[RMDB]
RNA sequence: GGGAACGACUCGAGUAGAGUCGAAAAUAUUACCACAAAUGGCUCGUGGGCCAUUUUUAAUGACCACCAUCUUAAUAGACCUGGUGUCUAUUGUGGCUCUGAUUUUAUUGACAUUGUCAGGCGGUUAUAACGGGUCGGUUCGCCGACCCGAAAAGAAACAACAACAACAAC
Reactivity to 2A3 in 0.01 (KOAc 150mM, MgCl2 10mM, bicine 150mM(pH8.5), 24C), signal-to-noise 3, nucleotides 027 to 129: u180a010u100u130a030c000c010a010c120a020a020a040u020g020g020c000u040c030g110u210g100g030g000c000c000a020u020u050u050u040u050a110a050u000g040a000c010c000a000c010c010a020u080c040u030u140a040a020u040a120g080a000c030c040u080g130g000u110g020u030c020u000a010u010u010g010u040g010g010c000u000c010u090g160a180u040u040u040u040a140u090u140g000a030c050a080u000u070g000u010c010a000g000g000c050g050g010u050u000a080u000a130a000
Reactivity to DMS in 0.01 (KOAc 150mM, MgCl2 10mM, bicine 150mM(pH8.5), 24C), signal-to-noise 2, nucleotides 027 to 129: u030a150u000u100a160c090c040a120c150a000a000a000u010g010g030c010u010c150g040u000g010g040g020c000c000a030u020u020u000u070u050a050a000u040g060a070c030c050a190c040c090a140u030c210u000u000a010a140u030a030g000a060c000c000u060g070g000u050g000u020c010u040a000u000u060g040u000g020g030c060u000c010u020g030a080u130u000u000u000a050u020u060g000a000c070a140u040u030g030u040c040a060g010g000c090g020g050u000u000a120u030a070a060